[RMDB]
RNA sequence: GGGAACGACUCGAGUAGAGUCGAAAAUGCACCCUGGGACCCAGUAAUACCCGGGGGGAGGCGGGGUUAACCCAUACUAUGGGAACUGCUGGGUUCCUCGGAUGUCGAUCCCCUCUCCCGUUCGGGACCGCUGCAAAGUUCGCUUUGCAGAAAAGAAACAACAACAACAAC
Reactivity to 2A3 in 0.01 (KOAc 150mM, MgCl2 10mM, bicine 150mM(pH8.5), 24C), signal-to-noise 9, nucleotides 027 to 129: u130g010c010a050c010c000c000u000g010g000g000a000c000c000c000a000g010u030a040a080u090a210c010c000c010g020g000g000g010g010g010a020g010g050c070g010g010g000g010u080u170a090a070c000c010c010a020u110a160c170u190a120u170g000g000g020a050a030c030u040g010c010u020g010g000g000u020u010c000c000u000c000g020g010a090u060g070u110c030g030a110u050c000c000c000c000u010c010u010c000c000c000g050u090u080c030g000g000g010a020c010c050g040
Reactivity to DMS in 0.01 (KOAc 150mM, MgCl2 10mM, bicine 150mM(pH8.5), 24C), signal-to-noise 8, nucleotides 027 to 129: u040g010c090a090c030c010c040u010g010g000g000a050c000c010c040a050g030u040a060a070u000a210c000c010c040g010g010g020g010g010g000a020g030g030c110g000g000g030g040u050u040a050a110c020c000c040a090u000a090c170u070a110u070g040g000g000a100a080c060u030g030c000u030g000g000g000u020u000c000c010u000c120g000g000a060u030g050u020c070g030a140u040c020c030c020c040u020c030u000c020c020c010g040u050u030c080g040g010g020a100c110c020g030
Chemical mapping of a 170-nucleotide RNA with 2A3 and DMS. Reactivities are rounded to 0.1 and cut off at 0 and 3. The RNA was probed in 150 mM KOAc, 10 mM MgCl2 and 150 mM bicine (pH 8.5) at 24 C. It was measured as part of the RMDB library 15KLIB.